Structure probing data (2A3 and DMS) for a 170-nucleotide construct.
The reactions ran in a buffer of 150 mM KOAc, 10 mM MgCl2 and 150 mM bicine (pH 8.5), at 24 C.
RNA sequence: GGGAACGACUCGAGUAGAGUCGAAAAUAGGGGAGACCGAAGCGAGGAGGAAAGCAAAGAAAGCAACGGGGCUAGCCGGUGGGUGUUCCUCCCCCCGAGAGGGGAAGAGUGAGGCUUAUCCCGGGGAUCAGUAGGGCGUUCGCGCCCUACAAAAGAAACAACAACAACAAC
Reactivity to 2A3 in 0.01 (KOAc 150mM, MgCl2 10mM, bicine 150mM(pH8.5), 24C), signal-to-noise 2, nucleotides 027 to 129: u210a010g000g000g000g030a010g030a000c010c040g010a030a000g040c050g010a070g000g030a030g000g080a000a010a000g000c060a140a000a060g080a020a060a010g050c040a050a030c150g040g000g030g000c010u050a030g040c020c000g030g010u070g000g060g000u060g100u060u030c000c000u010c020c000c000c000c000c010g080a070g010a050g050g030g010g030a000a000g020a000g010u180g040a030g000g000c030u040u000a010u070c020c000c000g000g000g000g000a100u140c020a020
Reactivity to DMS in 0.01 (KOAc 150mM, MgCl2 10mM, bicine 150mM(pH8.5), 24C), signal-to-noise 2, nucleotides 027 to 129: u040a070g030g000g060g000a120g060a020c040c030g000a110a100g040c150g090a010g000g050a000g000g000a050a040a100g020c150a000a000a000g060a090a010a030g040c160a140a100c070g000g000g020g050c060u010a130g000c060c040g080g050u070g040g010g030u000g060u000u030c010c050u010c000c000c000c000c000c000g020a180g020a110g140g000g000g000a030a050g000a060g040u080g060a110g010g060c130u060u060a080u020c110c020c090g000g010g030g070a050u070c110a000